[RMDB]
RNA sequence: GGGAACGACUCGAGUAGAGUCGAAAAUGUGCUAAGUCUAUUAAGACAAAUUUACAACAUAACGUCCCAGGCAUCGACUCCCAUUGAUGCCUAGUCCGGCUAUAGCUUACUUGUGCUUGCUAUAGUUAGCUCUCUAGAAGAGUGUAAGGGCAACACGCUGCUUCAGACACUUCGGUGUCUGAAGCAGAAAAGAAACAACAACAACAAC
Reactivity to 2A3 in 0.01 (KOAc 150mM, MgCl2 10mM, bicine 150mM(pH8.5), 24C), signal-to-noise 1, nucleotides 027 to 156: u120g000u070g010c040u100a130a000g000u000c000u040a200u200u240a100a050g000a010c010a090a220a060u250u220u100a050c100a010a010c000a040u050a080a040c090g110u050c000c000c000a000g010g000c000a000u000c000g040a040c040u000c110c040c040a020u020u070g000a000u000g000c000c030u000a000g000u000c000c000g000g000c000u000a010u000a000g000c040u130u040a040c000u190u300g200u270g200c020u080u030g000c000u000a000u000a000g000u000u010a000g000c010u020c000u000c010u000a190g030a300a000g000a300g000u020g030u060a020a020g030g000g010c000a000a000c120a050c020g040
Source: RMDB library ARCHII, as collected in RNAgym. This 207-nucleotide RNA was probed chemically with 2A3.